Annotation
This 177-nucleotide RNA was probed chemically with DMS and 2A3. DMS adducts were read by reverse transcription with MarathonRT. High 2A3 reactivity points to a flexible backbone, as in loops and unpaired stretches. The 2A3 profile rests on 3,321 reads.
RNA sequence: GGGAACGACUCGAGUAGAGUCGAAAAGAUAUGGACGGAGCUUUUGACGCCUUGCGAUCGGAAACGAUCGGCAAGGCGAUAAGCUCCUGUCCUAAGUCAAACUCUCGACGGUUCGCCGUCGAGAGAAGGAAAUACAGAGGUUCGCCUCUGUAUUUCCAAAAGAAACAACAACAACAAC
Reactivity to DMS in 0.01 (KOAc 150mM, MgCl2 10mM, bicine 150mM(pH8.5), 24C), signal-to-noise 2, nucleotides 027 to 126: g010a040u000a260u010g000g000a010c000g020g000a020g000c010u000u000u000u010g020a180c080g010c000c000u010u000g020c000g020a010u010c010g000g000a100a050a210c010g000a000u000c010g020g040c000a000a000g010g010c010g010a000u000a000a000g000c000u000c010c020u000g010u000c000c000u000a020a080g000u010c010a130a160a260c000u000c000u000c000g000a010c000g000g010u000u000c220g020c000c000g010u000c000g000a000g000a010g000a020a060
Reactivity to 2A3 in 0.01 (KOAc 150mM, MgCl2 10mM, bicine 150mM(pH8.5), 24C), signal-to-noise 2, nucleotides 027 to 126: g010a010u090a030u100g010g000a010c020g020g010a000g010c000u100u090u200u250g240a210c210g000c000c000u000u020g000c010g010a000u000c010g020g020a040a030a090c040g000a010u020c050g050g090c060a000a010g060g000c020g000a000u020a000a000g000c020u000c000c000u000g000u000c000c000u000a040a020g030u000c030a040a000a220c000u020c010u000c000g010a000c000g010g050u060u100c300g070c080c000g000u000c010g000a000g000a000g000a000a000